[RMDB]
RNA sequence: GGGAACGACUCGAGUAGAGUCGAAAAGGAAUAUUCAGCCUAAACAAUAGAAAUCCAAGAAAGACAUGACAGCCAAGAGAUAAUGUGCUUUACUUGGAUUAAAGGGUGGUGACCAAUGGUUCAUAUGACAGGAAGGCAAUCUCAGCUUGGCAUACAACACCAGGCUGAUAUUCGUAUCAGCCUGGUGAAAAGAAACAACAACAACAAC
Reactivity to 2A3 in 0.01 (KOAc 150mM, MgCl2 10mM, bicine 150mM(pH8.5), 24C), signal-to-noise 2, nucleotides 027 to 156: g000g010a020a070u070a070u120u110c010a030g030c010c020u190a160a190a050c040a040a030u090a190g220a190a040a020u000c000c020a000a040g070a040a050a000g000a000c020a010u070g020a070c050a070g010c030c010a070a030g110a010g020a020u060a110a050u090g010u070g010c000u080u030u000a210c000u000u030g040g000a000u000u000a000a000a000g000g000g000u070g010g010u000g060a000c000c000a000a060u050g000g060u030u040c090a040u090a040u190g060a060c030a020g000g040a030a020g040g000c000a020a020u070c020u020c000a020g020c000u010u060g010g000c000a020u080a010c030a030a010